[RMDB]
RNA sequence: GGGAACGACUCGAGUAGAGUCGAAAACUCGGCGGCGAGGGUGCCACCAUUCUGAACGAACCGAUCGGGUGGGAGAUGCGCGGACAAGGGCACCAGAUUUUCGUCGACGAGCUGGCGCGAUUCGCCACCCGCUACGUCGAUUCGUCGACGUAGCGGGAAAAGAAACAACAACAACAAC
Reactivity to 2A3 in 0.01 (KOAc 150mM, MgCl2 10mM, bicine 150mM(pH8.5), 24C), signal-to-noise 2, nucleotides 027 to 126: c000u000c000g010g000c000g010g000c000g000a030g000g080g010u000g020c010c000a050c000c000a090u180u140c070u110g040a120a050c050g030a190a200c080c030g000a010u060c080g020g000g000u050g010g050g030a060g000a220u300g070c110g000c020g130g070a130c080a070a080g000g000g000c000a000c000c000a000g050a090u260u300u070u050c000g000u020c000g000a000c000g000a010g000c070u020g000g010c000g040c120g100a250u040u170c060g010c000c000a020

Description:
Chemical mapping of a 177-nucleotide RNA with 2A3. Conditions: 150 mM KOAc, 10 mM MgCl2 and 150 mM bicine (pH 8.5), 24 C. For 2A3 the reverse transcriptase was SuperScript II with manganese.